Record summary
Chemical mapping of a 177-nucleotide RNA with DMS and 2A3. Values are in units of 0.01, from 0 to 300, in steps of 10. The RNA was probed in 150 mM KOAc, 10 mM MgCl2 and 150 mM bicine (pH 8.5) at 24 C. Reactivities are given for positions 27 through 126. 2A3 adducts were read by reverse transcription with SuperScript II with manganese. It was measured as part of the RMDB library RFMREP.
RNA sequence: GGGAACGACUCGAGUAGAGUCGAAAAGGUACAUUCGUGUACCGACAACCGAUGAUGGCAACAGGGUAGCUACCGAAGUUGAUGUGGAAGCCGUUCCAGUCUGAGGGAAGUUCACUUUCGAGUGAACGUGGUAUGAUGUUUUCGAACAUCAUACCACAAAAGAAACAACAACAACAAC
Reactivity to DMS in 0.01 (KOAc 150mM, MgCl2 10mM, bicine 150mM(pH8.5), 24C), signal-to-noise 4, nucleotides 027 to 126: g010g020u010a000c000a050u000u010c170g030u010g010u010a000c000c000g000a100c200a160a140c020c020g020a130u010g010a070u000g020g020c040a040a040c070a110g010g000g010u000a090g010c030u000a100c040c020g000a060a100g010u000u000g020a090u000g000u010g010g000a100a090g010c050c040g010u000u000c010c020a080g000u010c050u000g000a210g020g000g010a090a110g010u000u000c010a000c000u010u020u010c180g000a030g010u000g010a000a010c000
Reactivity to 2A3 in 0.01 (KOAc 150mM, MgCl2 10mM, bicine 150mM(pH8.5), 24C), signal-to-noise 5, nucleotides 027 to 126: g010g000u000a000c010a010u040u160c220g100u050g010u020a000c010c000g010a020c020a040a050c010c020g010a050u050g000a010u040g050g030c040a060a030c050a130g070g020g110u080a040g010c030u060a050c010c020g040a140a040g120u170u150g080a160u120g030u050g040g030a030a020g030c030c000g020u040u000c020c010a050g040u010c030u050g040a060g010g040g010a060a030g000u000u010c000a000c000u060u110u080c220g050a020g000u000g000a010a000c030